[RMDB]
RNA sequence: GGGAACGACUCGAGUAGAGUCGAAAAACAUAUGAACAAUAUUUACACCUUGAAGACUGCAUAUCUCAAGAUUAUGUGAUUUGUGACACAGUACAAAUAGUGUCACCAUGUGGAAAUUCGACAACAAUGUACGACUAUGAUUCGUCAUAGUCGUACAAAAAGAAACAACAACAACAAC
Reactivity to DMS in 0.01 (KOAc 150mM, MgCl2 10mM, bicine 150mM(pH8.5), 24C), signal-to-noise 4, nucleotides 027 to 126: a120c060a030u010a030u000g010a160a150c240a110a040u020a050u000u000u000a040c020a020c150c010u000u000g000a050a060g010a060c080u000g020c300a040u000a160u010c010u000c010a030a030g010a060u000u020a090u030g010u000g010a030u010u000u000g010u000g000a020c010a010c010a140g030u000a250c300a050a050a070u020a120g020u000g000u000c000a030c020c030a010u000g000u010g000g000a060a090a170u000u010c050g010a050c060a020a080c080a080a110
Reactivity to 2A3 in 0.01 (KOAc 150mM, MgCl2 10mM, bicine 150mM(pH8.5), 24C), signal-to-noise 3, nucleotides 027 to 126: a000c000a030u100a030u070g040a030a020c030a030a100u060a090u200u070u060a030c000a030c000c000u020u010g050a110a030g040a040c070u160g000c160a060u070a040u180c030u010c020a010a040g030a100u110u170a050u220g030u000g010a070u050u060u080g000u000g010a000c000a010c020a010g190u200a090c090a030a140a090u170a140g000u020g000u000c010a000c010c000a010u030g000u020g040g060a020a050a120u130u040c030g030a040c050a110a010c020a070a120